[RMDB]
RNA sequence: GGGAACGACUCGAGUAGAGUCGAAAAUAGCAGGGCCGAAUCCCUUCUCGAGGUUCGUUUACUUUAAGGCCUGCCUUAAGUAAGUGGUGUUGACGUUUGGGUCCUGCGCAAUGGGAAUUCAUGAACCAUGUCAGGUCCGGAAGGAAGCAGCAUUAAGCACUUUAGUUCGGUUCGCCGAACUAAAGUGAAAAGAAACAACAACAACAAC
Reactivity to 2A3 in 0.01 (KOAc 150mM, MgCl2 10mM, bicine 150mM(pH8.5), 24C), signal-to-noise 1, nucleotides 027 to 156: u120a000g000c010a030g000g010g010c020c050g050a060a020u030c000c050c050u100u080c070u040c050g050a030g000g020u080u000c010g040u000u060u050a130c040u000u000u240a060a030g040g030c050c090u110g060c050c000u000u000a040a010g010u050a040a030g000u040g080g050u090g090u080u100g080a080c090g040u060u090u080g150g000g010u060c000c000u030g000c040g000c010a020a080u020g000g060g030a010a130u190u100c030a000u240g000a070a050c000c000a060u050g020u030c010a000g000g000u030c030c030g030g070a100a020g050g020a000a010g010c030a000g000c000a030u110u080a080a050g110
Reactivity to DMS in 0.01 (KOAc 150mM, MgCl2 10mM, bicine 150mM(pH8.5), 24C), signal-to-noise 1, nucleotides 027 to 156: u000a160g030c010a040g000g050g020c010c060g020a070a140u020c010c020c010u000u010c040u000c000g030a060g030g060u010u010c030g020u000u000u000a110c140u000u010u010a090a090g000g040c010c090u000g020c040c030u010u010a040a060g000u010a000a060g020u030g040g030u010g070u010u010g010a210c050g000u020u010u030g030g080g020u000c010c000u000g000c110g000c030a060a070u010g020g010g010a040a260u010u040c110a120u020g020a060a200c040c000a090u000g010u020c020a070g010g000u000c000c010g070g000a170a060g000g020a060a100g000c030a090g010c030a100u000u000a050a190g020